[RMDB]
RNA sequence: GGGAACGACUCGAGUAGAGUCGAAAACAUGUGCAUGUGGGCCCAGCUGACCCUGGUGUCCAGAGGGAAAUGUGACCACAUUGACCACAGGUCAUGCUUCCAUCAUAGCAGGCUCGUUGCUGUGGUGCUGCGAUAGAGGUUUCGACCUCUAUCGCAGAAAAGAAACAACAACAACAAC
Reactivity to 2A3 in 0.01 (KOAc 150mM, MgCl2 10mM, bicine 150mM(pH8.5), 24C), signal-to-noise 3, nucleotides 027 to 126: c030a060u080g040u090g070c030a020u050g040u080g030g010g000c000c010c020a010g000c040u100g040a050c020c020c050u060g040g040u220g020u080c000c000a010g100a030g050g000g010a050a040a030u070g000u040g030a050c020c010a000c050a050u060u110g080a020c000c000a010c050a130g000g020u020c000a020u030g010c010u100u000c030c000a070u020c010a010u100a040g010c010a010g030g050c020u030c110g120u090u020g000c020u010g010u020g000g020u040g040
Reactivity to DMS in 0.01 (KOAc 150mM, MgCl2 10mM, bicine 150mM(pH8.5), 24C), signal-to-noise 1, nucleotides 027 to 126: c110a070u010g010u000g000c060a030u010g000u000g020g000g000c020c030c000a090g000c120u000g010a140c170c280c040u020g020g030u000g000u000c040c020a100g000a100g030g000g000a030a040a010u000g030u010g000a070c050c010a060c100a080u000u040g020a040c080c040a090c080a110g000g000u000c080a030u000g000c080u010u010c060c000a070u010c020a030u020a040g020c040a090g000g010c090u000c120g000u020u000g000c000u000g020u000g000g020u000g000